[RMDB]
The record gives the reactivity of an RNA of 177 nucleotides to 2A3 and DMS. Values cover nucleotides 27 to 126.
RNA sequence: GGGAACGACUCGAGUAGAGUCGAAAAGAUGGAGACAGGAAGUGGAUGAUGAUGCGCAAAGAGAUCGAGAAGGGCACUAACCGCCAGAUAGUGAAUACUCGAGAGCGCUGGCGGUACUUCCUAAGAAGAUUAGGUGACGAUUCGUCGUCACCUAAUCAAAAGAAACAACAACAACAAC
Reactivity to 2A3 in 0.01 (KOAc 150mM, MgCl2 10mM, bicine 150mM(pH8.5), 24C), signal-to-noise 5, nucleotides 027 to 126: g050a010u140g060g010a020g020a050c050a020g040g020a020a050g020u060g030g080a110u040g010a000u050g010a040u100g060c070g000c050a010a130a050g090a040g020a050u060c020g020a000g030a080a130g030g020g000c010a000c020u040a050a020c000c010g020c000c010a020g020a100u100a030g060u040g050a130a040u130a140c040u030c050g120a130g010a010g110c020g000c030u010g020g000c000g000g000u020a010c000u000u020c000c000u030a040a040g070a050a010
Reactivity to DMS in 0.01 (KOAc 150mM, MgCl2 10mM, bicine 150mM(pH8.5), 24C), signal-to-noise 3, nucleotides 027 to 126: g010a090u020g000g000a090g030a060c120a050g000g010a050a060g020u000g020g010a050u010g010a050u050g000a050u020g010c180g000c090a030a060a120g010a170g000a050u000c040g010a090g020a160a100g020g020g000c030a030c060u000a040a060c050c030g000c060c010a010g000a110u010a040g020u010g000a070a060u010a130c040u010c050g000a030g000a180g000c030g010c000u010g000g010c040g000g000u000a030c040u010u000c020c000u000a070a090g010a120a100